[RMDB]
RNA sequence: GGGAACGACUCGAGUAGAGUCGAAAAACGUAGGAUACGUCCUACGAGUGCUUGGUUCCUAGUAGGUGCUCAGUAAGUGUUUGUGACAUAAUUCGUUUAUUGAGCACCUCCUAUCAAUCAAGCACAAUUCACCGCAGGAUUUCGAUCCUGCGGUGAAAAAAGAAACAACAACAACAAC
Reactivity to 2A3 in 0.01 (KOAc 150mM, MgCl2 10mM, bicine 150mM(pH8.5), 24C), signal-to-noise 3, nucleotides 027 to 126: a010c000g010u000a000g000g000a000u020a070c290g110u010c000c000u010a000c000g010a010g000u000g010c010u000u000g020g000u000u010c000c010u020a000g000u000a000g040g000u000g000c010u010c010a000g020u010a010a000g030u000g110u080u010u020g270u140g230a100c070a180u300a100a120u120u020c000g010u000u000u000a000u000u000g000a000g000c000a000c000c010u000c000c000u010a000u000c010a010a010u000c000a000a000g000c010a000c000a010a040